[RMDB]
RNA sequence: GGGAACGACUCGAGUAGAGUCGAAAAGAUAUGGAGAGCACAGAGCAACAGCUAACAGUCGGAAACGACUGUUUAGACAUGCUCGUGCUCUCCUAAGUCAAAGGCCCAUUUGUUCGCAAAUGGGCCAGGUGUGUAAAGUGUUCGCACUUUACACACCAAAAGAAACAACAACAACAAC
Reactivity to DMS in 0.01 (KOAc 150mM, MgCl2 10mM, bicine 150mM(pH8.5), 24C), signal-to-noise 2, nucleotides 027 to 126: g000a000u000a020u010g000g000a010g010a010g010c000a000c020a120g010a020g020c000a110a050c220a090g020c000u000a010a000c000a010g000u000c030g030g000a000a010a020c000g000a000c010u000g000u000u000u010a010g010a010c060a300u030g020c000u010c000g000u000g000c000u010c000u000c000c000u000a010a040g000u000c000a120a140a120g000g000c000c010c000a020u000u000u000g010u020u030c230g030c010a010a020a010u000g010g000g010c000c000a000
Reactivity to 2A3 in 0.01 (KOAc 150mM, MgCl2 10mM, bicine 150mM(pH8.5), 24C), signal-to-noise 3, nucleotides 027 to 126: g000a010u000a020u050g000g000a000g010a000g000c030a020c110a070g020a010g000c110a300a300c120a240g000c010u000a010a000c020a000g020u000c000g000g010a010a000a000c000g000a000c000u000g010u010u010u040a000g000a000c020a150u300g000c000u000c000g000u000g010c000u020c010u000c000c000u000a000a000g000u000c010a010a030a100g000g000c000c000c000a000u010u000u010g080u050u110c300g010c260a000a010a000u000g000g020g000c000c000a010
Conditions: 150 mM KOAc, 10 mM MgCl2 and 150 mM bicine (pH 8.5), 24 C. This 177-nucleotide RNA was probed chemically with DMS and 2A3. As a SHAPE reagent, 2A3 marks flexible, mostly unpaired nucleotides at the ribose 2'-OH. For DMS the reverse transcriptase was MarathonRT. It was measured as part of the RMDB library TTRDES. For 2A3 the reverse transcriptase was SuperScript II with manganese.